[RMDB]
RNA sequence: GGGAACGACUCGAGUAGAGUCGAAAAUGACCACUUAUACAUUUGGUGUAUACAAUAUAUACAUAUUACGUCUGGUAUAAGUUAAGCCUAACGGACAGGCGGGUCGGAUGCCGGAAAAGAAAUAAAACGAGGAGUAGGACUUCGGUCCUGCUUCUCGAAAAGAAACAACAACAACAAC
Reactivity to DMS in 0.01 (KOAc 150mM, MgCl2 10mM, bicine 150mM(pH8.5), 24C), signal-to-noise 2, nucleotides 027 to 126: u040g000a020c000c010a070c010u000u020a000u000a010c010a050u020u000u020g010g020u000g010u000a020u020a060c150a110a100u060a300u020a080u020a070c040a050u020a070u020u030a120c090g000u000c040u010g000g000u000a000u000a000a020g000u010u020a060a070g030c000c000u000a090a240c010g000g000a010c020a010g010g010c010g000g000g000u000c010g000g020a020u190g000c000c000g000g000a300a020a110a250g000a100a130a150u030a130a240a230a300
Reactivity to 2A3 in 0.01 (KOAc 150mM, MgCl2 10mM, bicine 150mM(pH8.5), 24C), signal-to-noise 2, nucleotides 027 to 126: u270g040a030c000c000a000c000u010u010a000u010a000c010a060u110u080u110g010g010u020g000u010a030u000a010c040a100a010u060a010u010a000u000a070c010a030u100a050u060u090a010c030g030u010c020u050g030g000u000a000u000a000a000g010u030u090a070a000g000c000c000u010a100a000c010g020g040a010c000a000g000g000c000g010g000g000u010c030g000g010a030u140g000c000c000g000g000a010a120a020a000g090a000a170a010u250a030a110a010a050
Structure probing data (DMS and 2A3) for a 177-nucleotide construct. 2A3 is a SHAPE reagent: it acylates the 2'-hydroxyl of flexible nucleotides of all four kinds. Source: RMDB library OK1LIB, as collected in RNAgym. The 2A3 profile rests on 2,782 reads. For 2A3 the reverse transcriptase was SuperScript II with manganese. The DMS profile rests on 3,327 reads. The reactions ran in a buffer of 150 mM KOAc, 10 mM MgCl2 and 150 mM bicine (pH 8.5), at 24 C.